[RMDB]
RNA sequence: GGGAACGACUCGAGUAGAGUCGAAAAGCAAGGUUUCUGCUUUAUCUGGUUUUGAAGGUGAUGCCACACCUUUUACAGACGUUACGGUUGAAGCGGUUUCUAAGCUGUUACGUUCACAUGGCUUUCAGUCGAGAGGAUUUGAAGUUAUGUACCAUGACUGACCUCCAUGAUUCGUCAUGGAGGUCAGAAAAGAAACAACAACAACAAC
Reactivity to 2A3 in 0.01 (KOAc 150mM, MgCl2 10mM, bicine 150mM(pH8.5), 24C), signal-to-noise 1, nucleotides 027 to 156: g000c020a010a030g040g030u000u010u010c000u000g030c000u040u040u000a040u020c010u060g100g020u030u030u030u300g010a000a010g040g000u000g070a060u170g090c020c010a030c000a000c000c040u000u000u000u050a040c010a010g040a000c020g060u120u070a000c030g010g080u040u070g080a100a030g070c060g060g060u070u090u080c030u020a000a030g000c010u000g030u000u020a030c040g040u080u100c040a000c000a030u000g000g000c000u020u080u090c020a010g000u050c040g070a050g050a010g300g180a110u270u090u070g020a030a010g000u020u010a010u000g010u020a020c000c000a070u180g010a080
An RNA of 207 nucleotides, treated with 2A3 and read out base by base.
For 2A3, 765 sequencing reads were counted.
Values cover nucleotides 27 to 156.
The data come from the RNA Mapping Database (RMDB), library OK3TST.